Conditions: 150 mM KOAc, 10 mM MgCl2 and 150 mM bicine (pH 8.5), 24 C. Chemical mapping of a 170-nucleotide RNA with 2A3 and DMS.

RNA sequence: GGGAACGACUCGAGUAGAGUCGAAAAUGCCCCCACAUAGCAGAGUCCGGGACCCCCUCCUAAAAGACCGAGGGGGGGUGCUUGGAGCACGGGGGUCCCAGUGGAUCCGUGGGAUGCUCCUCCCGAUAACGUAUACCGUUCGCGGUAUACAAAAGAAACAACAACAACAAC
Reactivity to 2A3 in 0.01 (KOAc 150mM, MgCl2 10mM, bicine 150mM(pH8.5), 24C), signal-to-noise 9, nucleotides 027 to 129: u110g020c000c000c000c020c000a050c030a080u190a020g060c090a020g060a040g180u030c040c010g000g000g010a040c000c000c010c000c010u030c000c000u120a140a140a060a040g090a070c080c080g040a140g000g000g000g000g000g000g000u020g040c020u080u130g030g010a020g020c020a010c020g020g010g000g010g000u010c000c010c000a060g040u170g070g020a040u040c040c060g140u090g010g040g010a050u090g030c010u000c010c000u000c000c000c000g040a070u070a080a030c080
Reactivity to DMS in 0.01 (KOAc 150mM, MgCl2 10mM, bicine 150mM(pH8.5), 24C), signal-to-noise 9, nucleotides 027 to 129: u030g000c000c020c000c010c000a120c150a070u060a030g030c070a060g020a150g020u010c010c040g020g020g010a050c000c030c010c020c010u030c020c030u040a050a060a120a070g030a080c150c150g010a040g030g010g010g010g000g020g020u000g000c020u000u050g030g020a020g000c050a050c050g020g020g010g010g010u020c010c000c080a140g030u080g030g010a000u000c010c030g030u000g010g020g010a120u040g000c000u000c000c000u000c000c000c000g030a130u070a060a070c170
For 2A3, 82,222 sequencing reads were counted. The DMS profile rests on 65,044 reads. High DMS reactivity at an A or C suggests that its Watson-Crick edge is free. DMS adducts were read by reverse transcription with MarathonRT.